[RMDB]
RNA sequence: GGGAACGACUCGAGUAGAGUCGAAAAAUAGAGCGCGCGAAUUGGAAACCAGGGAACCAUAUUACGCGCGCAAGGAACCGGGCCUUGGUUCCUUGGAAAGAUUAGAUAAUUACCCGGUACCCGAUAACUAAAGGGAAAUAUUCGUAUUUCCCUUUAGAAAAGAAACAACAACAACAAC
Reactivity to DMS in 0.01 (KOAc 150mM, MgCl2 10mM, bicine 150mM(pH8.5), 24C), signal-to-noise 3, nucleotides 027 to 126: a100u010a110g000a150g020c010g010c000g050c010g010a120a090u010u020g020g010a180a120a100c010c010a040g000g000g000a030a030c010c000a060u000a060u020u010a110c010g010c010g020c010g020c010a010a020g010g000a140a030c000c000g010g010g010c110c120u010u000g010g010u000u000c000c000u010u010g000g000a130a090a090g010a130u000u000a080g010a090u010a060a070u010u010a130c020c020c000g000g000u000a090c040c010c010g020a100u000a060a190
Reactivity to 2A3 in 0.01 (KOAc 150mM, MgCl2 10mM, bicine 150mM(pH8.5), 24C), signal-to-noise 2, nucleotides 027 to 126: a010u060a010g100a000g020c010g010c040g000c030g060a060a080u110u100g140g130a190a080a120c020c010a010g000g020g000a000a000c000c010a020u030a110u250u070a090c030g000c000g030c000g000c000a000a000g030g010a000a000c000c000g000g050g000c000c000u020u090g000g000u010u040c010c050u010u000g000g000a100a100a020g090a040u120u240a060g060a070u170a170a030u060u060a030c000c010c010g000g070u040a060c040c020c020g090a100u040a220a110

This 177-nucleotide RNA was probed chemically with DMS and 2A3. The data come from the RNA Mapping Database (RMDB), library M2PK90. The RNA was probed in 150 mM KOAc, 10 mM MgCl2 and 150 mM bicine (pH 8.5) at 24 C. For 2A3, 1,237 sequencing reads were counted.